[RMDB]
RNA sequence: GGGAACGACUCGAGUAGAGUCGAAAACGCGUCUUCGGACGCGAUUGAAUCCUAAGUCUAGUGAUGACCUCCGGUAGGACAUGCUCUAUCGGAAACGAUAGAGCAACAGCCUACCAGGAGCAAGCUAGAUAUGGAAGGCGUCCCAUUUCGAUGGGAAUCACACUACUAUAUUCGUAUAGUAGUGUGAAAAAGAAACAACAACAACAAC
Reactivity to DMS in 0.01 (KOAc 150mM, MgCl2 10mM, bicine 150mM(pH8.5), 24C), signal-to-noise 4, nucleotides 027 to 156: c050g010c010g020u000c010u000u000c300g060g010a000c000g010c000g010a020u010u000g010a110a140u000c020c000u000a090a300g010u000c000u000a020g010u000g020a190u000g000a160c190c000u000c000c010g010g030u000a000g010g010a040c030a300u010g000c000u010c000u000a010u010c000g010g000a100a050a140c000g020a030u000a000g010a030g020c010a000a010c080a120g000c020c000u000a010c010c000a050g060g010a040g020c010a110a300g000c010u000a000g020a020u000a300u000g000g010a040a090g010g010c060g000u010c010c000c000a110u010u000u010c160g010a090u000g010g030g010a080a190
Reactivity to 2A3 in 0.01 (KOAc 150mM, MgCl2 10mM, bicine 150mM(pH8.5), 24C), signal-to-noise 6, nucleotides 027 to 156: c000g000c000g010u000c010u050u060c180g180g010a000c000g000c000g010a010u010u110g080a030a090u020c010c010u050a170a010g020u000c000u020a010g010u010g130a260u150g090a200c040c000u010c000c000g000g000u000a000g000g020a080c020a130u040g000c000u010c000u000a010u010c000g040g000a060a010a010c010g000a000u000a000g000a000g010c000a010a010c010a010g030c010c000u000a000c000c010a010g000g000a000g000c000a020a000g000c000u000a000g000a010u020a030u070g050g020a040a030g130g060c060g080u050c000c010c010a020u140u180u090c220g110a050u040g000g030g020a020a030
Chemical mapping of a 207-nucleotide RNA with DMS and 2A3. The 2A3 profile rests on 8,144 reads. Values cover nucleotides 27 to 156. The reactions ran in a buffer of 150 mM KOAc, 10 mM MgCl2 and 150 mM bicine (pH 8.5), at 24 C. For DMS, 10,597 sequencing reads were counted.